RNA sequence: GGGAACGACUCGAGUAGAGUCGAAAAAAAGUAAAAUCACUAGGCAAUGAGCAAUUUUACUUCCAUUAGCCUAAUGUCUUUGUGGUUUCAUCUGAGGUCACUAGUAGAUUAUUUUUCUUGCAUUAUUUCAUCAGCUGUCAGUUCUAUUACAAUCAUACCCCUUUUAGUCAUUCGUGACUAAAAGGGGAAAAGAAACAACAACAACAAC
Reactivity to 2A3 in 0.01 (KOAc 150mM, MgCl2 10mM, bicine 150mM(pH8.5), 24C), signal-to-noise 3, nucleotides 027 to 156: a000a000a000g050u050a050a030a030a080u110c040a040c060u030a010g010g000c020a030a080u050g030a050g040c080a060a030u020u120u110u300a090c000u040u040c040c000a030u030u010a040g000c000c010u010a040a030u070g010u000c070u070u110u070g010u020g000g020u000u030u040c030a110u010c080u100g030a010g030g030u040c000a000c030u040a020g070u070a030g080a090u080u040a080u060u150u010u070u020c030u030u060g020c010a060u050u070a030u050u260u100c040a050u000c010a020g030c020u050g070u100c020a030g030u030u020c020u050a140u120u040a110c050a070a080u230c200a030u280a180
Reactivity to DMS in 0.01 (KOAc 150mM, MgCl2 10mM, bicine 150mM(pH8.5), 24C), signal-to-noise 1, nucleotides 027 to 156: a010a010a090g030u010a000a040a040a090u020c030a050c020u010a000g040g030c060a060a010u010g030a110g020c090a030a120u000u000u000u000a070c040u000u000c110c030a090u000u000a180g030c000c000u010a040a080u000g010u000c030u010u000u010g020u000g030g010u000u030u010c040a110u010c110u040g000a070g040g000u000c000a060c040u010a080g000u000a090g000a140u000u000a100u000u000u000u010u000c020u020u010g000c030a050u000u010a130u000u000u000c010a080u000c040a150g010c010u000g020u000c030a050g000u000u010c090u000a060u000u000a090c040a060a130u000c100a110u020a300